Chemical mapping of a 207-nucleotide RNA with DMS and 2A3. The 2A3 profile rests on 3,753 reads. Source: RMDB library ARCHII, as collected in RNAgym. For DMS the reverse transcriptase was MarathonRT.

RNA sequence: GGGAACGACUCGAGUAGAGUCGAAAAGGAGGGUUGUCUUCGUCAUCAACACACACAGUUUAUAAUAACUGGCAAAUCAAACAAUAAUUUCGCAGUAGCUGCCUAAUCGCACUCUGCAUCGCCUAACAGCAUUUCCUAUGUGCUGUUAACGCGAUUCGAAUGAUAGGACGUUCGCGUCCUAUCAUUCAAAAGAAACAACAACAACAAC
Reactivity to DMS in 0.01 (KOAc 150mM, MgCl2 10mM, bicine 150mM(pH8.5), 24C), signal-to-noise 2, nucleotides 027 to 156: g000g010a090g010g020g010u010u010g000u000c040u000u000c060g010u000c070a190u010c080a080a080c060a070c060a190c110a120c000a030g020u000u000u000a080u020a140a160u020a010a030c020u000g010g030c060a020a080a110u010c080a090a100a110c050a120a130u010a080a160u000u010u010c040g000c010a070g000u000a030g040c090u020g000c000c050u000a100a110u000c090g040c010a040c010u000c000u000g000c000a110u000c000g050c010c060u000a010a010c000a030g020c020a020u000u020u010c160c140u000a100u000g050u000g000c000u000g000u000u000a010a050c020g010c000g020a050u010u000c080
Reactivity to 2A3 in 0.01 (KOAc 150mM, MgCl2 10mM, bicine 150mM(pH8.5), 24C), signal-to-noise 6, nucleotides 027 to 156: g010g010a020g050g040g020u220u010g040u080c010u030u010c020g150u020c020a050u030c030a050a000c020a000c000a000c000a010c000a060g010u020u000u050a300u080a250a120u210a040a010c010u000g060g000c050a020a040a140u160c050a070a080a140c060a050a100u170a160a110u090u180u180c080g000c000a010g010u250a010g040c180u020g000c010c020u070a070a080u130c040g000c000a010c010u000c000u000g010c020a000u010c000g000c000c000u000a000a000c000a000g000c000a010u020u100u200c060c080u150a100u230g010u000g010c010u000g000u000u010a010a010c020g000c000g000a000u060u090c070